An RNA of 177 nucleotides, treated with 2A3 and DMS and read out base by base. For DMS the reverse transcriptase was MarathonRT. Source: RMDB library OK2TRN, as collected in RNAgym. Reactivities are given for positions 27 through 126. The RNA was probed in 150 mM KOAc, 10 mM MgCl2 and 150 mM bicine (pH 8.5) at 24 C.

[RMDB]
RNA sequence: GGGAACGACUCGAGUAGAGUCGAAAAAUCUGACGGUGUGACCUGCACUCGAAGCCAUUUUAGUAGAAAACCAAAGCUUAAAUGUGCCUCUACCAAAUGACCAUCAACUAACCCCAGACUGUUAAACUAACAUGAAACCAUUCGUGGUUUCAUGUUAAAAAGAAACAACAACAACAAC
Reactivity to 2A3 in 0.01 (KOAc 150mM, MgCl2 10mM, bicine 150mM(pH8.5), 24C), signal-to-noise 2, nucleotides 027 to 126: a000u090c020u050g040a000c050g040g000u040g000u020g130a110c020c070u080g000c010a010c060u060c120g040a030a010g000c000c000a010u020u080u080u010a070g050u010a030g060a060a220a050a020c060c020a040a070a070g040c020u080u110a050a040a030u090g040u070g030c020c000u030c000u020a030c000c020a000a060a090u100g020a030c010c010a030u030c010a010a080c050u060a060a080c000c030c000c010a010g060a110c060u140g030u210u140a080a080a060c050
Reactivity to DMS in 0.01 (KOAc 150mM, MgCl2 10mM, bicine 150mM(pH8.5), 24C), signal-to-noise 4, nucleotides 027 to 126: a080u010c020u000g000a200c230g020g010u010g010u000g010a090c100c020u010g000c040a060c060u010c060g010a110a120g000c050c040a030u010u000u000u010a060g020u000a100g010a050a010a090a120c140c050a070a090a090g020c050u000u000a020a090a080u000g000u000g000c050c030u000c030u020a060c070c040a030a070a050u000g000a040c060c020a050u010c050a020a050c100u010a090a130c030c010c010c040a100g000a070c130u010g010u000u010a010a090a090c190